[RMDB]
RNA sequence: GGGAACGACUCGAGUAGAGUCGAAAACUCUUACCCAGCUGAGUCCUUUGUGUCUCUUCUCUUUUCAUUGCGUCUCUCUGGCAAAGCCCUAACCCUGGAUCAGCCCCACUCUCUAUUUUCUGCAUGCCUGUGCGCAAGCAACUGACAAAAUAGAAAAGAUCAUGCUGGAUUUCGAUCCAGCAUGAUCAAAAGAAACAACAACAACAAC
Reactivity to 2A3 in 0.01 (KOAc 150mM, MgCl2 10mM, bicine 150mM(pH8.5), 24C), signal-to-noise 1, nucleotides 027 to 156: c020u000c020u030u200a120c000c000c000a030g010c070u000g000a000g020u080c000c050u170u000u000g090u060g090u090c020u030c050u140u090c040u080c000u100u090u120u120c090a150u070u110g010c030g040u000c000u000c000u000c000u040g050g000c010a080a000a060g000c030c000c000u050a070a110c030c000c030u030g030g110a110u090c000a010g050c020c000c030c000a050c000u040c000u000c010u010a050u010u070u000u000c070u010g040c020a040u010g000c000c000u080g120u180g120c070g040c060a050a050g000c000a020a080c010u080g110a020c100a060a130a070a060u280a140g120a030a260a020a000
Source information: Chemical mapping of a 207-nucleotide RNA with 2A3. For 2A3 the reverse transcriptase was SuperScript II with manganese. The reactions ran in a buffer of 150 mM KOAc, 10 mM MgCl2 and 150 mM bicine (pH 8.5), at 24 C.